[RMDB]
RNA sequence: GGGAACGACUCGAGUAGAGUCGAAAAGAUAUGGACGCAAAUGGCUUUUGACGCGUGUAUGUCGGAAACGACGAAGCGCGAUAAGCCAUUGCGUCCUAAGUCAAACCUACGACUUCGGUCGUAGGAAGAUAACUGUAAUCUUCGGAUUACAGUUAUCAAAAGAAACAACAACAACAAC
Reactivity to 2A3 in 0.01 (KOAc 150mM, MgCl2 10mM, bicine 150mM(pH8.5), 24C), signal-to-noise 9, nucleotides 027 to 126: g030a010u050a030u130g000g000a000c000g000c020a030a090a300u020g010g010c030u100u150u160u280g260a170c030g030c040g050u220g020u160a090u300g000u010c000g020g010a060a050a040c010g010a000c000g020a080a010g000c000g000c000g020a030u050a040a010g000c010c000a000u000u000g000c000g000u000c000c000u000a010a000g010u000c020a020a020a110c000c000u010a000c000g010a000c010u050u150c300g120g000u000c000g000u000a000g000g000a000a020
Reactivity to DMS in 0.01 (KOAc 150mM, MgCl2 10mM, bicine 150mM(pH8.5), 24C), signal-to-noise 7, nucleotides 027 to 126: g000a030u010a300u010g010g000a020c000g010c010a010a030a040u000g010g010c000u000u000u010u010g020a180c060g010c000g020u000g000u010a160u010g010u000c000g020g010a090a070a200c010g010a010c010g000a140a300g000c000g010c010g010a080u000a010a020g010c000c000a010u000u000g000c010g000u000c000c000u000a000a030g000u000c030a080a110a180c000c000u000a000c000g000a020c000u000u010c180g020g000u000c000g020u000a000g000g010a020a040
The data come from the RNA Mapping Database (RMDB), library TTRDEL. This 177-nucleotide RNA was probed chemically with 2A3 and DMS. Reactivities are given for positions 27 through 126. DMS adducts were read by reverse transcription with MarathonRT. As a SHAPE reagent, 2A3 marks flexible, mostly unpaired nucleotides at the ribose 2'-OH.